[RMDB]
RNA sequence: GGGAACGACUCGAGUAGAGUCGAAAACUCGCCCUCUCCAUGUUCCUGGCUGGCGAGAUGAGCCUUCUCAUCCUUGACGAGCCAACGCCCUUCCUAGAUGAGGAGAGGCGCAGGAGGCUUAUAAGCAUACUGCAGCACGAUUCGUCGUGCUGCAGUAAAAAGAAACAACAACAACAAC
Reactivity to 2A3 in 0.01 (KOAc 150mM, MgCl2 10mM, bicine 150mM(pH8.5), 24C), signal-to-noise 1, nucleotides 027 to 126: c010u000c000g030c000c020c010u000c000u050c010c030a080u140g060u090u000c010c010u010g050g030c000u010g130g000c020g000a030g010a020u020g000a010g040c000c000u230u080c030u020c020a030u080c020c050u080u130g080a110c060g050a030g010c020c010a040a000c020g030c010c040c000u060u020c010c020u090a130g000a300u100g170a120g050g020a020g000a020g000g040c010g000c010a020g000g060a030g000g000c000u150u100a190u050a150a080g050c010a050
Reactivity to DMS in 0.01 (KOAc 150mM, MgCl2 10mM, bicine 150mM(pH8.5), 24C), signal-to-noise 2, nucleotides 027 to 126: c010u000c050g020c040c030c040u000c020u010c010c030a130u000g050u000u010c050c000u010g000g020c090u000g010g000c010g010a050g010a030u000g020a050g010c190c100u000u000c000u000c000a060u010c050c080u010u010g010a150c080g000a050g010c110c050a070a120c130g010c010c000c010u010u000c010c010u000a170g000a090u010g000a100g000g010a030g010a040g010g000c100g030c040a040g000g020a050g000g010c040u010u000a100u020a100a100g020c130a210